An RNA of 177 nucleotides, treated with 2A3 and DMS and read out base by base. The RNA was probed in 150 mM KOAc, 10 mM MgCl2 and 150 mM bicine (pH 8.5) at 24 C. Source: RMDB library M2PK50, as collected in RNAgym. DMS adducts were read by reverse transcription with MarathonRT. The DMS profile rests on 5,890 reads. 2A3 adducts were read by reverse transcription with SuperScript II with manganese.

RNA sequence: GGGAACGACUCGAGUAGAGUCGAAAACUCAACUCGUUCGCGAGUUGAGAAACCCGAUGAAGCGGCACUUAGACAGCUUCAUACACCUAUGAAAAGUGCUAAAAAGAAAACGGUUCGCCGUUUUCAACAGUGAUUAUAGGUUCGCCUAUAAUCACUGAAAAGAAACAACAACAACAAC
Reactivity to 2A3 in 0.01 (KOAc 150mM, MgCl2 10mM, bicine 150mM(pH8.5), 24C), signal-to-noise 6, nucleotides 027 to 126: c000u010c000a000a000c000u000c000g030u060u030c080g020c020g090a010g010u000u000g000a000g000a040a020a000c010c000c000g000a050u060g010a020a010g040c040g030g000c050a010c040u040u020a030g050a150c050a040g010c000u000u010c000a000u040a010c060a030c010c070u200a170u240g100a100a090a020a020g020u020g000c030u090a110a100a010a040a060g010a000a010a000a000c010g000g030u030u050c230g030c060c010g010u000u000u000u020c000a000a010
Reactivity to DMS in 0.01 (KOAc 150mM, MgCl2 10mM, bicine 150mM(pH8.5), 24C), signal-to-noise 5, nucleotides 027 to 126: c010u000c000a000a010c000u000c000g020u000u010c210g010c020g010a010g010u000u000g000a020g020a020a080a130c010c000c010g010a080u000g010a040a030g040c040g020g020c020a030c050u000u000a090g010a100c140a140g000c030u000u010c050a030u010a100c160a100c170c120u000a090u010g010a070a050a070a030g010u000g010c030u000a050a070a100a130a070g000a010a000a010a010c000g010g010u000u010c200g010c000c000g010u000u000u000u000c010a080a150